About this RNA
This 177-nucleotide RNA was probed chemically with DMS and 2A3. The reactions ran in a buffer of 150 mM KOAc, 10 mM MgCl2 and 150 mM bicine (pH 8.5), at 24 C. 2A3 adducts were read by reverse transcription with SuperScript II with manganese.
[RMDB]
RNA sequence: GGGAACGACUCGAGUAGAGUCGAAAAGCGGGACCUCCCAAAACUGUAGAGAUAUCCCCGGGUGCUGCUGAGAUAGCUAACCUCGGCCUAACCACUGAGCCGGAUCCGUAUUGCCGUUAUACCCGCGGGAGCAAAGUAUAUUCGUAUACUUUGCUCCAAAAGAAACAACAACAACAAC
Reactivity to DMS in 0.01 (KOAc 150mM, MgCl2 10mM, bicine 150mM(pH8.5), 24C), signal-to-noise 7, nucleotides 027 to 126: g010c030g010g000g000a170c090c070u010c010c010c010a080a070a110a120c110u000g010u000a080g010a120g000a120u000a090u000c030c020c010c060g010g000g010u000g010c100u000g010c030u000g010a110g010a090u010a070g010c070u010a110a110c110c030u000c040g010g020c020c050u000a080a080c080c060a060c110u000g000a100g010c040c030g000g010a060u000c040c020g020u000a080u010u000g010c020c020g010u000u000a090u000a110c000c010c010g020c170g020
Reactivity to 2A3 in 0.01 (KOAc 150mM, MgCl2 10mM, bicine 150mM(pH8.5), 24C), signal-to-noise 5, nucleotides 027 to 126: g020c030g020g000g060a140c010c040u030c020c020c020a040a070a020a040c070u090g060u150a040g040a020g010a150u070a070u180c020c030c020c020g030g010g030u060g050c030u030g010c010u030g020a020g020a130u150a070g050c030u040a050a070c000c010u020c020g020g000c000c010u060a070a050c030c010a050c100u070g040a020g040c030c020g020g020a050u020c020c000g010u050a090u030u150g020c010c000g030u040u040a090u070a140c010c010c020g010c070g050